[RMDB]
RNA sequence: GGGAACGACUCGAGUAGAGUCGAAAAGUACGGUAUUCUUUGGACGGUAAUUUCAGAACAGAGGUUGAUCCCGACCUAUCUGCUUUCUAUGUUAAGGAUGGUAAAUACUUUACAAGUGAACCACCCGCCAUACUAAUCAGUUCGCUGAUUAGUAUGGAAAAGAAACAACAACAACAAC
Reactivity to DMS in 0.01 (KOAc 150mM, MgCl2 10mM, bicine 150mM(pH8.5), 24C), signal-to-noise 5, nucleotides 027 to 126: g010u010a060c110g010g000u000a060u000u000c030u000u000u000g010g010a090c120g010g010u010a040a070u000u000u000c090a090g010a030a080c060a020g010a030g000g000u000u000g000a150u000c020c020c010g010a020c020c010u000a100u000c010u000g010c180u000u010u000c040u000a090u010g010u000u010a090a080g010g000a050u000g000g000u000a040a060a080u010a020c010u000u000u000a100c140a080a050g000u000g010a130a050c010c020a080c020c010c020g000
Reactivity to 2A3 in 0.01 (KOAc 150mM, MgCl2 10mM, bicine 150mM(pH8.5), 24C), signal-to-noise 4, nucleotides 027 to 126: g070u050a030c070g050g030u060a120u120u050c040u070u070u120g040g020a020c040g000g030u060a090a090u060u130u130c070a020g020a060a030c000a010g030a010g040g000u010u010g010a100u020c000c010c000g000a000c000c000u030a090u030c000u000g030c020u040u050u000c030u030a100u100g090u080u090a060a030g020g000a030u040g010g030u050a080a160a050u070a060c010u060u050u070a070c080a070a010g010u010g040a040a010c000c000a000c000c000c000g010

Structure probing data (DMS and 2A3) for a 177-nucleotide construct. 2A3 adducts were read by reverse transcription with SuperScript II with manganese. DMS adducts were read by reverse transcription with MarathonRT.